[RMDB]
RNA sequence: GGGAACGACUCGAGUAGAGUCGAAAAGAUAUGGAAAGCGACAUGGAAUACUGAAACUAUCGGAAACGAUAGGAACCACUAUUCCAACAGCGCUUUCCUAAGUCAAAGUCACCCUUCGGGGUGACAAGAAUUUAGUAAUCUUCGGAUUACUAAAUUCAAAAGAAACAACAACAACAAC
Reactivity to 2A3 in 0.01 (KOAc 150mM, MgCl2 10mM, bicine 150mM(pH8.5), 24C), signal-to-noise 3, nucleotides 027 to 126: g010a010u060a010u110g000g020a010a010a000g000c020g190a220c090a100u080g000g010a010a000u010a010c020u020g000a090a070a010c010u010a010u010c000g040g000a120a040a030c010g000a000u010a010g000g010a010a010c030c000a010c020u000a010u010u010c000c010a030a020c060a050g050c000g000c000u000u000u010c000c000u000a090a010g010u000c040a110a040a050g000u000c000a000c010c010c000u000u070c270g120g010g010g010u040g010a010c000a000a010
Reactivity to DMS in 0.01 (KOAc 150mM, MgCl2 10mM, bicine 150mM(pH8.5), 24C), signal-to-noise 6, nucleotides 027 to 126: g010a050u010a300u010g000g000a010a000a010g000c000g000a050c090a280u000g000g010a010a000u000a010c110u000g000a060a060a180c000u000a010u010c000g000g000a140a080a180c000g000a000u000a000g000g000a120a190c280c020a020c090u000a000u000u000c000c000a020a060c270a130g000c020g000c000u000u000u000c000c000u000a020a060g000u000c020a070a090a180g000u000c000a000c000c000c000u000u020c190g020g000g010g020u000g000a000c010a030a070